[RMDB]
RNA sequence: GGGAACGACUCGAGUAGAGUCGAAAAGUAACAAUCUUCGGAUUGUUACAUAGCCUCCAGGUGGAAACCAAAACCUUAGAAAGAAAAGAGAAAGAAAAACAAGUGACUACCUGUUCGCAGGUAGUAAGACGGGGUAUAAUUUCGAUUAUACCCCGUCAAAAGAAACAACAACAACAAC
Reactivity to 2A3 in 0.01 (KOAc 150mM, MgCl2 10mM, bicine 150mM(pH8.5), 24C), signal-to-noise 1, nucleotides 027 to 126: g010u000a010a000c000a000a020u020c000u020u000c150g050g010a000u000u000g010u020u020a000c010a000u000a000g050c000c020u000c050c040a050g000g000u120g040g100a170a110a150c050c000a010a040a070a110c020c020u120u100a060g110a050a150a000g040a070a050a070a000g050a010g020a050a060a080g050a020a090a030a000a000c050a150a000g040u030g180a020c000u010a000c000c000u030g020u040u070c220g030c040a000g010g000u000a010g000u020a000a000
Reactivity to DMS in 0.01 (KOAc 150mM, MgCl2 10mM, bicine 150mM(pH8.5), 24C), signal-to-noise 1, nucleotides 027 to 126: g000u000a000a020c000a000a000u000c000u000u000c130g030g000a030u000u000g000u010u000a000c000a080u000a100g010c120c030u000c090c110a120g010g030u040g000g000a110a080a180c030c030a070a100a090a110c010c060u010u000a080g000a090a110a070g000a040a050a000a080g010a080g000a020a020a080g000a020a030a030a070a070c190a060a090g020u020g020a080c000u010a000c010c000u000g000u010u020c220g010c020a000g000g000u000a010g030u000a050a030
Source: RMDB library M2PK50, as collected in RNAgym. An RNA of 177 nucleotides, treated with 2A3 and DMS and read out base by base. For DMS, 730 sequencing reads were counted.